[RMDB]
Structure probing data (DMS and 2A3) for a 177-nucleotide construct.
RNA sequence: GGGAACGACUCGAGUAGAGUCGAAAAGGCACUAUCUUCGGAUAGUGCCAAAACGGGAAAACGGCCUCCCGAAAAGAAAAGAUCGAAACGAUCAAAAGGCCCAAAUCUCCCGGUUCGCCGGGAGAAACAAUAUGUAUAACUUCGGUUAUACAUAUUGAAAAGAAACAACAACAACAAC
Reactivity to DMS in 0.01 (KOAc 150mM, MgCl2 10mM, bicine 150mM(pH8.5), 24C), signal-to-noise 4, nucleotides 027 to 126: g010g020c010a010c010u000a000u000c000u000u020c200g030g010a020u000a000g010u000g000c000c000a010a010a050a150c020g010g010g000a060a030a080a130c240g000g010c000c000u000c000c000c000g000a060a070a190a110g000a090a070a080a130g000a000u000c010g010a100a090a120c120g000a010u000c000a040a050a110a100g010g020c000c010c140a050a040a140u000c000u000c000c000c000g010g010u000u010c180g020c000c000g010g000g000a000g000a000a050a100
Reactivity to 2A3 in 0.01 (KOAc 150mM, MgCl2 10mM, bicine 150mM(pH8.5), 24C), signal-to-noise 3, nucleotides 027 to 126: g000g000c000a000c000u000a000u000c000u030u050c090g010g000a000u000a010g000u010g000c000c000a000a000a000a000c000g000g000g020a010a050a030a050c030g010g010c020c000u010c000c000c000g020a080a130a020a010g060a020a120a010a040g010a010u020c020g120a300a170a200c100g000a010u010c020a000a110a000a050g010g000c000c000c010a020a020a040u000c000u010c000c000c000g000g050u040u040c200g040c030c000g010g000g000a000g000a000a000a000
The 2A3 profile rests on 7,597 reads. The DMS profile rests on 5,254 reads. For DMS the reverse transcriptase was MarathonRT. Conditions: 150 mM KOAc, 10 mM MgCl2 and 150 mM bicine (pH 8.5), 24 C.